[RMDB]
The data come from the RNA Mapping Database (RMDB), library OK2TST. Structure probing data (DMS and 2A3) for a 177-nucleotide construct.

RNA sequence: GGGAACGACUCGAGUAGAGUCGAAAAACGGGCUGGAUUAACUGAAGUGUUAUCGACUGGAAUGCUGAUUAAGUGAAUCAGUGUCAGACACAGACCGAUCGCCAGCGGUGCGGCUACUGCCGGAGAGCUGCAUGGCAGCAUUCGUGCUGCCAUGCAGAAAAGAAACAACAACAACAAC
Reactivity to DMS in 0.01 (KOAc 150mM, MgCl2 10mM, bicine 150mM(pH8.5), 24C), signal-to-noise 1, nucleotides 027 to 126: a190c070g000g000g010c010u000g010g000a110u000u000a060a100c060u000g000a180a070g000u000g030u010u000a070u000c150g000a150c000u010g010g000a020a050u020g010c000u000g010a010u000u020a120a190g010u000g000a060a020u000c010a000g000u000g010u010c030a060g000a140c160a080c040a070g000a110c090c000g020a070u000c080g020c010c010a050g010c010g000g040u000g000c040g000g030c050u000a060c120u000g040c000c040g020g010a120g020a120g010
Reactivity to 2A3 in 0.01 (KOAc 150mM, MgCl2 10mM, bicine 150mM(pH8.5), 24C), signal-to-noise 1, nucleotides 027 to 126: a000c070g000g090g010c020u010g050g040a100u080u080a100a050c020u060g110a180a090g060u060g020u130u060a160u150c050g050a050c020u020g000g100a070a130u090g020c010u030g000a050u000u090a300a280g190u120g290a040a000u000c000a000g000u000g020u050c100a010g000a050c000a000c000a100g080a050c020c030g020a010u040c110g020c030c020a000g000c000g000g050u040g000c040g000g000c020u040a120c080u300g050c000c030g070g000a080g000a000g120
The reactions ran in a buffer of 150 mM KOAc, 10 mM MgCl2 and 150 mM bicine (pH 8.5), at 24 C.